The data come from the RNA Mapping Database (RMDB), library OK1LIB. Structure probing data (2A3 and DMS) for a 177-nucleotide construct. For 2A3 the reverse transcriptase was SuperScript II with manganese.
[RMDB]
RNA sequence: GGGAACGACUCGAGUAGAGUCGAAAACACGGGCACGUAUCUUCCGGCACAGUCGGGAAAGGAUGUGUCCAUUCCUCUGGGAAGAAACACAGCGCUUGCGCGUGACGGCCUUACGGUCAUUGCAGAAUCAUAUGACGAGGUUCGCCUCGUCAUAUGAAAAAGAAACAACAACAACAAC
Reactivity to 2A3 in 0.01 (KOAc 150mM, MgCl2 10mM, bicine 150mM(pH8.5), 24C), signal-to-noise 7, nucleotides 027 to 126: c090a020c040g000g010g000c000a010c010g010u060a080u080c010u050u000c000c000g010g000c030a070c060a300g040u040c010g020g000g040a100a040a020g020g020a020u040g000u010g010u000c010c000a000u020u010c000c000u040c060u040g040g010g030a100a030g040a060a150a010c080a010c010a070g010c020g010c060u100u230g030c050g010c010g060u030g030a050c040g020g000c000c010u090u170a060c110g010g000u000c010a030u030u180g030c020a010g050a100a060
Reactivity to DMS in 0.01 (KOAc 150mM, MgCl2 10mM, bicine 150mM(pH8.5), 24C), signal-to-noise 3, nucleotides 027 to 126: c210a050c130g020g000g010c000a020c010g010u010a040u010c020u000u000c020c000g060g010c040a190c200a120g040u010c000g000g010g000a040a040a020g000g000a040u030g010u000g000u000c010c000a200u000u000c000c010u010c130u060g000g000g010a080a040g030a090a080a050c120a040c090a110g010c010g000c000u000u010g030c050g000c020g020u010g010a050c080g020g010c010c010u000u010a070c110g000g000u000c010a050u000u000g010c040a040g000a140a120
The 2A3 profile rests on 8,653 reads. The reactions ran in a buffer of 150 mM KOAc, 10 mM MgCl2 and 150 mM bicine (pH 8.5), at 24 C.